[RMDB]
RNA sequence: GGGAACGACUCGAGUAGAGUCGAAAAAGGGGGGCUUCACCUGAGGGUGAGGCCAUCCUAUCCACUUCUGGUGCCGGACACCGGUACUACUGGGACGGUCGCACUGCGGCGCCGCUCGAUGCCGGAGAGCCCAUUUAUGCUUCGGCAUAAAUGGGCUAAAAGAAACAACAACAACAAC
Reactivity to 2A3 in 0.01 (KOAc 150mM, MgCl2 10mM, bicine 150mM(pH8.5), 24C), signal-to-noise 2, nucleotides 027 to 126: a000g000g000g010g010g000g000c000u000u010c000a000c000c000u090g110a270g020g000g070u000g000a000g000g020c000c000a040u070c000c000u000a050u000c000c030a100c080u010u020c010u070g020g030u070g000c000c000g050g040a150c090a120c090c000g000g010u030a080c010u020a100c040u070g020g000g040a070c100g020g030u100c010g010c000a170c160u120g020c060g030g010c020g020c000c000g090c020u000c000g070a070u060g000c000c000g010g000a040g020
This 177-nucleotide RNA was probed chemically with 2A3.
The reactions ran in a buffer of 150 mM KOAc, 10 mM MgCl2 and 150 mM bicine (pH 8.5), at 24 C.
2A3 is a SHAPE reagent: it acylates the 2'-hydroxyl of flexible nucleotides of all four kinds.